[RMDB]
RNA sequence: GGGAACGACUCGAGUAGAGUCGAAAAAGCCAUCAAAUUGAUAUGGAUACAUAAAUGCCGAACAUAGAAAUAGCUCAGGCCGAUGAGGUGAUCAUAACCACGCUGGAGGAAUUAGGGCCGGCAGAGCCCACAUGGUCACAUUCGUGUGACCAUGUGGAAAAGAAACAACAACAACAAC
Reactivity to DMS in 0.01 (KOAc 150mM, MgCl2 10mM, bicine 150mM(pH8.5), 24C), signal-to-noise 3, nucleotides 027 to 126: a110g000c000c010a020u000c090a080a130a140u010u000g000a120u000a060u000g000g000a110u000a070c090a080u000a050a060a090u010g010c020c030g020a080a090c130a090u000a080g010a050a060a050u000a100g000c010u000c030a080g010g010c050c030g010a090u000g010a100g010g050u000g000a070u010c130a060u020a080a080c070c030a080c110g000c040u000g000g000a100g000g010a050a060u000u010a140g020g010g020c060c020g000g000c050a050g010a100g010c120
Reactivity to 2A3 in 0.01 (KOAc 150mM, MgCl2 10mM, bicine 150mM(pH8.5), 24C), signal-to-noise 2, nucleotides 027 to 126: a000g060c030c000a040u050c030a020a140a200u120u100g010a010u040a020u170g010g000a010u020a090c040a070u170a090a180a040u150g010c020c000g050a090a020c000a010u240a080g150a030a110a030u070a040g000c020u000c020a050g050g010c030c000g070a080u060g040a010g000g050u070g030a040u110c020a020u050a110a040c050c000a030c060g000c010u070g060g030a050g010g050a040a000u080u060a080g000g000g030c030c020g010g020c010a020g010a000g080c000